[RMDB]
This 177-nucleotide RNA was probed chemically with DMS and 2A3. DMS adducts were read by reverse transcription with MarathonRT. 2A3 adducts were read by reverse transcription with SuperScript II with manganese. Values cover nucleotides 27 to 126. Source: RMDB library OK2TST, as collected in RNAgym.
RNA sequence: GGGAACGACUCGAGUAGAGUCGAAAAGUCUGGAGCCUGGUGGAGGUUUGAGCAUCUGCUCCCAGCUCCCGAGCAGGGCUCCUGGAUGCUCCCGUAGCUGUGAAGAGCUUUGCUGAUGGAGUCCUGCCAGGUACUGAGGAUUCGUCCUCAGUACCUGAAAAGAAACAACAACAACAAC
Reactivity to DMS in 0.01 (KOAc 150mM, MgCl2 10mM, bicine 150mM(pH8.5), 24C), signal-to-noise 2, nucleotides 027 to 126: g020u000c060u000g000g010a070g000c180c130u000g020g030u020g000g010a130g030g010u000u000u000g010a040g000c000a030u000c020u000g010c020u010c030c000c010a060g000c000u000c000c010c080g010a090g020c000a020g010g010g010c000u000c000c020u000g010g000a040u000g000c020u000c000c050c120g010u000a020g000c010u000g020u010g020a190a230g010a080g000c020u000u000u010g020c120u010g020a070u000g000g000a030g000u000c000c000u000g010c050
Reactivity to 2A3 in 0.01 (KOAc 150mM, MgCl2 10mM, bicine 150mM(pH8.5), 24C), signal-to-noise 2, nucleotides 027 to 126: g090u030c050u030g040g000a030g010c130c040u090g010g050u140g110g300a210g050g110u060u080u130g030a020g000c010a020u020c030u060g030c040u040c000c020c000a020g000c010u000c000c040c010g020a020g000c000a000g010g000g000c000u000c000c000u000g020g020a010u020g010c000u020c000c050c000g000u060a010g000c000u040g030u080g250a200a120g050a000g160c020u120u130u200g040c060u110g010a060u140g010g020a010g000u010c010c000u000g000c020